RNA sequence: GGGAACGACUCGAGUAGAGUCGAAAAGCAAGCAGAACUCCACCAGGAAACGGUUAGAACCUUAGUUAAGCUGACUAAGGGGACCUACCUGGCCACUCUCGAAUAGUGAUGGACACCUUGGUGAGUGUGUCCAGUGUUGGUUCGCCAACACUGGACAAAAAGAAACAACAACAACAAC
Reactivity to 2A3 in 0.01 (KOAc 150mM, MgCl2 10mM, bicine 150mM(pH8.5), 24C), signal-to-noise 3, nucleotides 027 to 126: g070c010a040a050g010c000a070g100a200a030c070u000c010c020a020c000c010a000g000g060a060a160a020c080g030g050u170u190a070g020a160a050c000c000u020u000a010g010u050u050a270a030g190c180u210g070a000c000u000a000a000g000g000g000g020a000c000c000u010a000c000c000u000g000g010c000c000a010c010u030c000u040c060g030a070a070u110a300g010u060g030a090u060g070g000a030c010a030c090c020u020u040g050g010u040g050a180g010u070g020
Reactivity to DMS in 0.01 (KOAc 150mM, MgCl2 10mM, bicine 150mM(pH8.5), 24C), signal-to-noise 2, nucleotides 027 to 126: g000c040a130a050g000c300a070g000a150a020c130u000c010c070a250c000c030a000g000g000a050a030a160c220g010g000u010u000a000g010a150a190c000c000u030u000a000g000u000u030a090a050g060c260u040g030a030c000u000a000a010g000g000g000g000a050c130c050u000a010c020c010u010g000g010c100c030a030c060u000c000u000c000g000a160a010u050a040g000u000g020a050u020g000g000a050c070a040c060c010u030u010g020g010u000g000a000g000u000g000

This 177-nucleotide RNA was probed chemically with 2A3 and DMS. The DMS profile rests on 1,702 reads. Values cover nucleotides 27 to 126. The reactions ran in a buffer of 150 mM KOAc, 10 mM MgCl2 and 150 mM bicine (pH 8.5), at 24 C. For DMS the reverse transcriptase was MarathonRT.